[RMDB]
RNA sequence: GGGAACGACUCGAGUAGAGUCGAAAACUCGCGCGAACAUGGAGGCGUGGAGCGCGACAUGAAUCAGCCUCAAUUAGAUUAAUGGUCGACAGAUCAGCGGCGAUCAGCGACCCAAUUAGAAGCCGCGACCGGAAGAGGAGACGCUCGACGGACGUCACAUCGUAUAGUGAUUCGUCACUAUACGAUGAAAAGAAACAACAACAACAAC
Reactivity to 2A3 in 0.01 (KOAc 150mM, MgCl2 10mM, bicine 150mM(pH8.5), 24C), signal-to-noise 5, nucleotides 027 to 156: c020u010c000g000c000g010c000g080a300a010c010a030u070g060g000a010g020g000c010g020u010g000g010a080g000c010g000c020g030a020c030a140u290g100a090a100u140c060a070g000c000c000u000c000a010a110u140u130a060g080a090u050u140a160a000u170g010g000u010c010g020a100c070a090g010a020u010c020a060g010c010g010g000c010g000a010u010c020a000g030c000g010a020c000c000c020a040a080u140u100a100g070a190a000g020c000c010g030c010g020a030c000c050g000g030a060a030g020a050g030g010a050g010a060c050g040c120u030c040g050a030c010g020g000a010c020g050u080c030a010
Reactivity to DMS in 0.01 (KOAc 150mM, MgCl2 10mM, bicine 150mM(pH8.5), 24C), signal-to-noise 2, nucleotides 027 to 156: c000u000c020g070c010g030c000g010a140a090c050a060u000g070g010a070g040g020c030g040u000g020g010a300g040c020g010c040g020a080c070a140u030g020a160a060u000c110a160g000c020c020u000c030a120a090u000u000a090g030a120u010u000a040a080u010g000g020u000c000g000a080c050a100g030a270u000c080a170g050c010g050g000c000g000a080u010c000a070g020c120g010a070c030c000c000a040a060u000u000a130g000a080a040g000c000c010g020c050g000a090c060c000g020g000a120a130g030a140g000g000a200g010a040c000g020c030u000c020g020a110c060g030g000a040c020g030u000c000a180